The record gives the reactivity of an RNA of 177 nucleotides to DMS and 2A3. Reactivities are given for positions 27 through 126. For DMS the reverse transcriptase was MarathonRT. Conditions: 150 mM KOAc, 10 mM MgCl2 and 150 mM bicine (pH 8.5), 24 C.
RNA sequence: GGGAACGACUCGAGUAGAGUCGAAAAGGCAUUGACGGAGGGGUACCACCAGACGUGGAGUCUGCGGCUCAAUCUGACUCAACGCGCGCACCUCACCAGGCCCGGACGCGCGGAGGACCGACAGCCGUACUGUUCACAUGUUCGCAUGUGAACAGUAAAAAGAAACAACAACAACAAC
Reactivity to DMS in 0.01 (KOAc 150mM, MgCl2 10mM, bicine 150mM(pH8.5), 24C), signal-to-noise 5, nucleotides 027 to 126: g000g000c040a090u010u000g010a080c100g000g000a080g000g000g000g020u010a110c050c050a110c110c060a040g000a060c070g000u010g010g020a150g030u010c030u010g000c070g000g020c020u000c070a050a130u020c040u020g010a110c050u010c050a080a140c060g000c020g010c030g000c080a070c030c000u000c110a100c080c070a070g000g010c050c060c120g000g020a180c030g000c020g010c040g000g000a090g010g000a100c070c080g000a050c130a090g010c000c010g030
Reactivity to 2A3 in 0.01 (KOAc 150mM, MgCl2 10mM, bicine 150mM(pH8.5), 24C), signal-to-noise 5, nucleotides 027 to 126: g050g010c070a070u030u120g060a060c030g000g020a030g020g020g010g030u040a100c000c030a030c000c020a030g020a040c030g070u080g070g040a040g020u000c030u010g040c010g020g000c020u020c020a050a090u020c020u070g040a070c010u010c050a110a110c040g010c010g000c000g000c030a130c010c000u040c010a080c030c030a010g040g020c010c020c030g040g010a040c010g000c000g000c000g000g000a030g020g030a050c030c020g020a020c050a010g010c010c010g020